Overview:
An RNA of 207 nucleotides, treated with 2A3 and DMS and read out base by base. The RNA was probed in 150 mM KOAc, 10 mM MgCl2 and 150 mM bicine (pH 8.5) at 24 C. For DMS the reverse transcriptase was MarathonRT. For DMS, 3,031 sequencing reads were counted.
RNA sequence: GGGAACGACUCGAGUAGAGUCGAAAAACGGUCAUAUACGUAUGACCGAAUGAGCAUGACAGGGCCACCCCAAAGCGUUCACAUUGUGGCCCCUGUCAGAUUCUGGUAAAUCUGCGAGUUCUGCUAAAUUAGGUAACUCUCUUCGGAGAGUUACCAACUCCAGUAAUAACUUCGGUUAUUACUGGAGAAAAGAAACAACAACAACAAC
Reactivity to 2A3 in 0.01 (KOAc 150mM, MgCl2 10mM, bicine 150mM(pH8.5), 24C), signal-to-noise 4, nucleotides 027 to 156: a000c010g000g010u010c010a000u030a000u030a050c210g090u030a020u010g000a000c000c000g030a010a050u090g010a010g030c080a060u060g000a010c000a020g000g010g000c010c000a020c010c070c010c010a070a180a030g120c080g130u240u240c040a090c030a230u170u160g000u010g000g030c030c040c000c010u000g000u010c000a000g010a010u140u040c030u080g020g040u040a050a070a140u070c070u120g080c050g050a050g070u060u050c040u040g060c040u090a010a100a190u210u190a090g000g000u000a000a000c010u000c010u000c000u030u040c090g040g000a000g010a000g000u000u000a000c000c000a000a000
Reactivity to DMS in 0.01 (KOAc 150mM, MgCl2 10mM, bicine 150mM(pH8.5), 24C), signal-to-noise 2, nucleotides 027 to 156: a200c010g000g010u000c000a000u000a040u000a120c190g010u000a020u000g020a040c000c000g010a020a030u000g000a130g040c150a220u000g000a060c040a010g020g020g000c000c050a070c030c040c030c050a030a060a150g000c060g020u010u010c110a110c050a180u000u000g020u000g000g010c110c020c000c010u000g000u000c000a010g000a120u010u000c050u000g030g030u000a120a070a060u000c050u010g010c000g020a130g030u010u000c190u020g010c050u000a070a050a130u010u000a100g030g000u000a000a010c000u000c000u000c000u000u000c270g080g010a020g000a070g020u000u000a010c000c010a030a040